Chemical mapping of a 207-nucleotide RNA with DMS and 2A3. The data come from the RNA Mapping Database (RMDB), library M2RFPK. Reactivities are rounded to 0.1 and cut off at 0 and 3. Conditions: 150 mM KOAc, 10 mM MgCl2 and 150 mM bicine (pH 8.5), 24 C. For 2A3, 1,595 sequencing reads were counted.

[RMDB]
RNA sequence: GGGAACGACUCGAGUAGAGUCGAAAAAACUCGUUGAUUGAAAUUGAACCGUCCUGUUAUCGAAAGAUAGGCAGAAGAUACGAAAUGUGUGACAGCAUGGGAAGUAAAGGCAGACCGUGGUUCCCUUAAAAUCGUCGAAUCUUCGGAUUCGACGAAAGUAAUCUGCAUAGUUCGCUAUGCAGAUUACAAAAGAAACAACAACAACAAC
Reactivity to DMS in 0.01 (KOAc 150mM, MgCl2 10mM, bicine 150mM(pH8.5), 24C), signal-to-noise 2, nucleotides 027 to 156: a090a070c000u000c030g020u000u000g040a130u000u000g020a080a130a130u000u000g000a070a100c030c020g000u000c010c020u020g020u000u000a040u000c070g020a120a130a160g000a040u000a070g010g030c050a030g030a060a040g030a170u000a090c080g010a040a090a050u000g040u020g010u000g000a100c050a150g000c020a100u000g020g020g020a070a070g010u000a040a040a080g040g010c030a070g000a070c030c030g040u000g010g000u000u000c000c000c000u000u000a030a040a070a150u000c000g010u000c000g000a010a010u000c000u000u000c300g020g010a030u000u000c000g020a010c000g020a000a000a090
Reactivity to 2A3 in 0.01 (KOAc 150mM, MgCl2 10mM, bicine 150mM(pH8.5), 24C), signal-to-noise 2, nucleotides 027 to 156: a000a000c070u050c060g040u040u050g050a230u000u040g030a080a110a100u060u050g040a070a020c020c000g040u040c010c020u020g020u040u030a040u070c030g050a070a060a000g030a010u030a030g100g000c010a020g030a130a000g030a050u070a090c020g030a040a090a090u080g040u010g030u060g040a020c020a020g040c000a010u070g000g020g030a060a050g030u130a080a060a050g060g010c010a000g010a040c010c030g030u020g000g030u030u020c000c000c000u000u030a060a150a040a120u030c000g010u010c000g010a000a010u020c000u000u060c200g060g000a000u000u000c000g000a000c000g000a000a000a000